[RMDB]
RNA sequence: GGGAACGACUCGAGUAGAGUCGAAAAAUUUGUAGACGAGGAGGAUAGUGAUCGAAUAGAUCGGCGGAUGCUAUCCCGGAUGUGGCUCAUUCGUUAGCUUAUUAAGUAAAACAUUAGGGUGACUUAAGAAAUCAUAACUUUUCGAAGUUAUGAUUUCAAAAGAAACAACAACAACAAC
Reactivity to 2A3 in 0.01 (KOAc 150mM, MgCl2 10mM, bicine 150mM(pH8.5), 24C), signal-to-noise 9, nucleotides 027 to 126: a000u090u120u160g060u030a060g010a050c050g010a050g090g020a030g010g020a030u010a020g070u080g080a040u040c020g010a090a090u090a170g060a050u030c020g010g030c030g060g030a030u070g020c000u020a020u030c000c020c000g010g010a050u050g050u060g070g010c030u020c110a070u110u020c020g040u060u050a010g000c010u060u050a090u160u120a210a030g040u070a050a080a050a040c050a120u050u170a050g030g050g020u030g010a010c000u010u000a060a030
Reactivity to DMS in 0.01 (KOAc 150mM, MgCl2 10mM, bicine 150mM(pH8.5), 24C), signal-to-noise 8, nucleotides 027 to 126: a080u010u010u010g010u000a140g000a060c050g000a060g010g010a110g010g020a050u010a030g010u010g010a020u000c010g000a120a100u030a110g000a030u010c020g020g020c060g000g010a060u020g000c050u010a040u000c010c010c040g010g010a050u010g010u000g010g010c080u000c020a070u010u010c050g010u010u010a120g000c030u000u010a080u010u010a040a070g020u010a060a060a080a070c080a090u020u010a100g010g000g010u000g010a170c020u000u010a040a280